[RMDB]
Structure probing data (DMS and 2A3) for a 177-nucleotide construct. Reactivities are given for positions 27 through 126. The RNA was probed in 150 mM KOAc, 10 mM MgCl2 and 150 mM bicine (pH 8.5) at 24 C.
RNA sequence: GGGAACGACUCGAGUAGAGUCGAAAAUGUAAAUCAGUCAAAUAAUCUCGCCACGAGCGCCCGACAUCUUGAUAUUUACUUAGACCCCCGCUUAAGUAAAUAUGGCCAAGAUGAUGACAUAGUCUGAGUAUCAUAUAAGAUUCGUCUUAUAUGAUACAAAAGAAACAACAACAACAAC
Reactivity to DMS in 0.01 (KOAc 150mM, MgCl2 10mM, bicine 150mM(pH8.5), 24C), signal-to-noise 6, nucleotides 027 to 126: u000g010u010a080a090a090u010c070a100g000u000c040a060a100a100u010a120a110u000c040u010c050g010c040c040a090c160g000a120g030c140g010c010c010c010g020a180c020a010u010c010u000u000g000a050u000a010u000u000u000a010c000u000u000a020g000a180c040c020c030c050c050g020c120u010u000a000a020g000u000a000a010a010u000a010u010g010g040c290c030a010a020g010a010u000g010a110u000g010a060c090a080u010a120g010u000c010u000g010a300
Reactivity to 2A3 in 0.01 (KOAc 150mM, MgCl2 10mM, bicine 150mM(pH8.5), 24C), signal-to-noise 9, nucleotides 027 to 126: u170g020u070a050a070a090u120c050a030g120u030c040a030a070a080u140a070a060u090c030u020c040g020c020c010a070c090g030a060g040c030g010c020c010c000g030a020c000a010u010c000u010u010g020a000u010a010u010u000u000a010c010u010u010a080g140a250c000c020c000c000c000g020c060u050u050a000a000g000u000a000a010a000u030a010u030g110g040c040c010a010a010g000a010u020g020a060u090g010a010c040a120u160a040g100u020c010u010g020a010